[RMDB]
RNA sequence: GGGAACGACUCGAGUAGAGUCGAAAACAAAUGUCCCAUACUCUCGUGUUAUUUCCAGGAUGGGCUUUAAACUCGAUGCAACAGUUCCUGGAUAUCCUAAGCUUUUCAUUACUCGUGAAGAGGCUGUGAUAAUUAGGAUGUUCGCAUCCUAAUUAUCAAAAGAAACAACAACAACAAC
Reactivity to DMS in 0.01 (KOAc 150mM, MgCl2 10mM, bicine 150mM(pH8.5), 24C), signal-to-noise 4, nucleotides 027 to 126: c150a070a110a110u000g010u010c020c000c010a170u020a140c110u010c020u000c040g040u000g000u000u020a120u000u000u010c010c020a050g010g010a080u000g010g000g000c010u000u010u010a050a090a150c120u000c080g010a080u010g020c110a070a090c100a120g000u010u000c000c000u000g020g000a050u010a050u010c040c040u000a040a030g010c010u000u000u000u000c010a030u000u010a090c200u010c120g010u000g000a030a040g020a020g010g010c030u000g010u010
Reactivity to 2A3 in 0.01 (KOAc 150mM, MgCl2 10mM, bicine 150mM(pH8.5), 24C), signal-to-noise 3, nucleotides 027 to 126: c040a010a110a040u130g060u050c000c010c000a000u060a030c060u070c010u010c050g040u040g050u160u090a120u070u090u000c000c000a010g020g000a020u020g010g050g000c010u060u120u100a100a110a040c050u040c090g050a050u110g020c050a150a080c020a230g050u050u020c000c000u000g000g000a020u020a020u040c010c020u040a060a010g010c010u030u010u020u000c010a030u010u130a130c070u050c120g010u010g020a030a010g040a030g090g000c030u060g040u020